[RMDB]
RNA sequence: GGGAACGACUCGAGUAGAGUCGAAAAAUCAGUCGCGGUAUUCUCUGUCUCGUACGCGUGGCCCGGUUGACGAGGUGCGUAGACAUUGUACUCAUUUUGACAUCCGUCCGUAGUGUGGCUCCACAACUAGUAGACACUGCUUCGGCAGUGUCUACUAAAAAGAAACAACAACAACAAC
Reactivity to 2A3 in 0.01 (KOAc 150mM, MgCl2 10mM, bicine 150mM(pH8.5), 24C), signal-to-noise 3, nucleotides 027 to 126: a010u120c040a020g010u000c000g010c040g040g020u080a110u160u030c040u010c020u080g060u060c020u000c060g020u140a050c020g000c000g050u000g040g080c010c010c020g000g030u070u020g050a050c040g000a050g130g020u040g010c030g100u080a040g020a090c030a000u020u070g040u060a020c020u050c040a150u010u010u000u150g060a050c050a010u000c030c000g050u030c010c010g040u020a080g030u060g070u070g050g020c050u090c020c070a130c030a130a060c010
Reactivity to DMS in 0.01 (KOAc 150mM, MgCl2 10mM, bicine 150mM(pH8.5), 24C), signal-to-noise 1, nucleotides 027 to 126: a030u000c060a090g010u010c080g050c120g040g000u000a030u080u030c010u030c040u000g000u000c030u000c050g020u010a030c040g100c060g060u000g030g020c060c020c000g000g000u000u010g020a100c080g000a040g000g050u020g030c030g000u010a000g000a020c120a070u010u000g000u110a110c020u050c040a110u020u020u020u030g000a110c020a020u000c000c010g000u000c020c050g020u010a080g000u000g020u000g000g000c000u000c000c000a060c160a050a070c040
Overview: This 177-nucleotide RNA was probed chemically with 2A3 and DMS. For DMS the reverse transcriptase was MarathonRT. Reactivities are given for positions 27 through 126. The reactions ran in a buffer of 150 mM KOAc, 10 mM MgCl2 and 150 mM bicine (pH 8.5), at 24 C. It was measured as part of the RMDB library OK1LIB.